[RMDB]
This 177-nucleotide RNA was probed chemically with DMS and 2A3. Conditions: 150 mM KOAc, 10 mM MgCl2 and 150 mM bicine (pH 8.5), 24 C.
RNA sequence: GGGAACGACUCGAGUAGAGUCGAAAAAGAUACGGGACGACGUGUCGAAUUAUCCAAGUUGCAGCGGCUGCCCCGGACGUUGGAUACAACACGACGAAUCGUAGUAACCACGCUGCGGCUGCGGCCCCCUACUGCUGGACUUCGGUCCAGCAGUAGGAAAAGAAACAACAACAACAAC
Reactivity to DMS in 0.01 (KOAc 150mM, MgCl2 10mM, bicine 150mM(pH8.5), 24C), signal-to-noise 2, nucleotides 027 to 126: a050g030a070u000a010c000g000g000g000a270c130g030a220c000g000u000g010u000c000g000a030a140u000u030a050u020c020c020a050a060g040u010u030g000c060a040g000c040g000g050c050u050g000c060c270c080c010g000g020a200c000g080u030u030g010g000a010u040a000c270a080a080c270a070c010g000a120c270g000a050a140u000c000g030u000a010g010u000a040a080c040c020a040c030g010c060u010g000c080g040g000c040u010g000c060g000g000c010c140c080
Reactivity to 2A3 in 0.01 (KOAc 150mM, MgCl2 10mM, bicine 150mM(pH8.5), 24C), signal-to-noise 3, nucleotides 027 to 126: a000g020a020u050a000c020g000g060g100a050c090g050a020c000g010u010g010u040c000g020a020a090u200u070a040u120c020c010a030a010g020u010u020g100c100a060g040c100g040g000c010u060g020c010c000c000c030g020g030a060c020g030u070u110g030g000a040u040a190c030a090a020c010a030c090g070a010c070g100a030a100u070c030g010u000a050g050u020a020a070c060c000a030c070g000c040u040g050c020g040g020c040u040g030c010g010g000c000c000c000
It was measured as part of the RMDB library OK1LIB.